An RNA of 207 nucleotides, treated with DMS and 2A3 and read out base by base. It was measured as part of the RMDB library OK3TST. Values cover nucleotides 27 to 156. The 2A3 profile rests on 5,286 reads. 2A3 adducts were read by reverse transcription with SuperScript II with manganese.

[RMDB]
RNA sequence: GGGAACGACUCGAGUAGAGUCGAAAAGGCCGCUCGGAGGCGUGCUGCCGCUGUUCAGCGAGGGCGCGAUGUGGGCGUUCGCGUUCUCGGUGCACCUGGCCCGCCGCCAGGGACGCCCGACGGGGUGGCUGCACACCGGGGUGUGGACGUUCGCCGCACCCGUGUAUACUUUCGAGUAUACACGGGUAAAAGAAACAACAACAACAAC
Reactivity to DMS in 0.01 (KOAc 150mM, MgCl2 10mM, bicine 150mM(pH8.5), 24C), signal-to-noise 2, nucleotides 027 to 156: g020g030c020c030g000c000u000c040g030g010a100g040g020c000g020u010g020c030u000g020c030c010g060c000u000g000u000u000c090a110g040c040g010a070g010g020g020c000g010c020g020a080u010g000u020g050g000g010c040g030u010u000c030g030c010g010u000u010c010u000c000g000g030u020g020c050a160c020c010u000g020g030c000c060c270g040c170c150g010c010c010a040g010g000g010a030c060g030c010c030c030g010a110c180g000g010g030g010u020g030g000c050u000g020c060a100c020a050c000c010g000g000g030g040u010g020u010g020g010a030c010g000u000u010c010g000c010c020g000c120
Reactivity to 2A3 in 0.01 (KOAc 150mM, MgCl2 10mM, bicine 150mM(pH8.5), 24C), signal-to-noise 5, nucleotides 027 to 156: g050g000c010c010g030c050u010c030g130g040a060g040g030c020g020u030g010c050u090g040c010c020g020c040u080g080u200u140c080a060g030c040g040a070g020g030g000c030g000c010g040a040u140g020u080g070g030g010c030g020u010u000c000g000c010g020u170u120c010u000c000g000g010u030g000c010a060c030c000u010g010g010c040c130c060g170c080c040g000c000c030a010g010g010g010a040c050g000c020c020c020g030a070c050g000g020g000g010u060g020g020c100u120g010c070a040c000a000c010c000g000g000g000g020u060g020u040g010g010a000c010g010u020u020c030g010c040c000g010c010